[RMDB]
RNA sequence: GGGAACGACUCGAGUAGAGUCGAAAAGGACGAUGAGCUGGCUCCAGGCUCGCUCGCAACGAUCAUUUCGAGGCUGGACAGCGACGUCGCCAAACUUCAAUUCUCGCUGACCCGGAUCAAUGAUCGGAAUAUGACGUCCGUUCGCGGACGUCAUAUUAAAAGAAACAACAACAACAAC
Reactivity to 2A3 in 0.01 (KOAc 150mM, MgCl2 10mM, bicine 150mM(pH8.5), 24C), signal-to-noise 3, nucleotides 027 to 126: g040g020a060c070g010a030u160g040a000g000c000u030g090g030c020u000c050c000a050g000g030c000u000c030g010c010u020c040g120c030a090a100c050g040a040u140c040a050u120u150u080c090g000a000g110g060c020u020g000g010a040c020a000g000c020g050a050c000g050u040c000g010c000c000a090a070a000c030u200u110c060a030a280u120u020c040u000c070g100c100u080g060a090c040c000c040g020g030a050u020c040a050a120u130g040a010u030c000g000g000
Reactivity to DMS in 0.01 (KOAc 150mM, MgCl2 10mM, bicine 150mM(pH8.5), 24C), signal-to-noise 2, nucleotides 027 to 126: g010g000a110c040g010a010u050g020a300g000c030u000g000g020c120u000c000c000a060g000g010c000u000c030g000c060u010c000g000c110a090a150c070g030a020u000c020a030u030u000u010c040g000a000g000g010c000u000g030g000a120c010a020g020c000g000a070c250g000u000c000g030c040c000a030a070a110c050u110u030c100a100a120u000u030c020u000c000g000c070u000g000a100c120c000c010g040g000a040u000c130a050a020u020g000a050u010c000g020g030
Overview
The data come from the RNA Mapping Database (RMDB), library OK1LIB. An RNA of 177 nucleotides, treated with 2A3 and DMS and read out base by base. The reactions ran in a buffer of 150 mM KOAc, 10 mM MgCl2 and 150 mM bicine (pH 8.5), at 24 C. The DMS profile rests on 1,968 reads. DMS adducts were read by reverse transcription with MarathonRT. Values cover nucleotides 27 to 126. Values are in units of 0.01, from 0 to 300, in steps of 10.